[RMDB]
RNA sequence: GGGAACGACUCGAGUAGAGUCGAAAAUUGAUUAUCUUUGAUUUUCAAUUUAUUACGCUGUACUUGGUUCCUAUUUUGGUUUCAAACAAGAUUUACUGACUUUUACUCACUAAGAUAACCUACAUCUAUUCGAGACACGAUUCGUCGUGUCUCGAAUAAAAGAAACAACAACAACAAC
Reactivity to 2A3 in 0.01 (KOAc 150mM, MgCl2 10mM, bicine 150mM(pH8.5), 24C), signal-to-noise 2, nucleotides 027 to 126: u000u000g000a000u030u000a000u020c150u150u150u290g010a010u020u000u000u000c000a000a000u020u040u050a170u130u110a090c010g000c020u060g060u230a000c000u000u010g090g000u060u020c040c000u000a200u050u140u060u070g080g000u050u030u190c010a000a070a070c060a110a000g050a050u080u020u080a100c050u010g040a000c000u010u090u020u000a020c020u000c070a020c040u070a000a080g020a130u020a070a070c020c000u030a030c020a060u000c030u050
The record gives the reactivity of an RNA of 177 nucleotides to 2A3.
Conditions: 150 mM KOAc, 10 mM MgCl2 and 150 mM bicine (pH 8.5), 24 C.
Values cover nucleotides 27 to 126.
For 2A3, 870 sequencing reads were counted.
It was measured as part of the RMDB library RFM100.